The record gives the reactivity of an RNA of 207 nucleotides to DMS and 2A3.

[RMDB]
RNA sequence: GGGAACGACUCGAGUAGAGUCGAAAAUCUAGGGUUUCGCAUGUCAAUUGACAUGGACUGGUCCGAGAGAAAACACAUACGCGUAAAUAGAAGCGCGUAUGCACACGGAGGGAAAAAAGCCCGGGAGAAUGGGAUUAUUAGUUCGCUAAUAAUCCAACGUAGUUCAUUGAUUCGUCAAUGAACUACGAAAAGAAACAACAACAACAAC
Reactivity to DMS in 0.01 (KOAc 150mM, MgCl2 10mM, bicine 150mM(pH8.5), 24C), signal-to-noise 1, nucleotides 027 to 156: u000c020u000a060g040g020g020u000u000u000c050g050c020a010u000g000u010c010a210a120u000u000g020a030c000a010u010g010g000a100c010u000g020g000u000c010c000g000a170g020a100g000a110a090a040a090c190a030c000a000u000a020c020g010c000g060u000a020a110a130u010a240g000a240a300g020c000g000c000g040u000a000u000g010c000a130c040a110c050g000g010a120g030g000g010a020a010a070a060a110a060g030c020c000c030g000g020g020a080g000a190a080u000g020g030g010a040u000u000a010u000u000a030g040u000u000c300g080c010u000a000a010u000a020a000u000c020c010a000a070
Reactivity to 2A3 in 0.01 (KOAc 150mM, MgCl2 10mM, bicine 150mM(pH8.5), 24C), signal-to-noise 3, nucleotides 027 to 156: u010c020u060a050g050g000g040u010u130u300c010g000c000a000u000g000u000c020a220a300u240u300g000a000c000a000u010g000g030a030c040u150g010g010u000c010c000g000a000g000a000g000a020a130a020a000c100a010c000a030u000a010c010g030c000g060u100a060a290a170u170a270g130a300a030g000c000g000c010g000u000a010u010g000c030a040c010a000c070g020g010a090g060g050g000a020a170a010a020a060a220g050c000c000c000g010g040g020a070g060a090a060u150g060g000g000a000u000u000a000u010u010a010g030u020u050c160g000c090u000a000a000u000a000a000u010c000c000a010a010
2A3 adducts were read by reverse transcription with SuperScript II with manganese.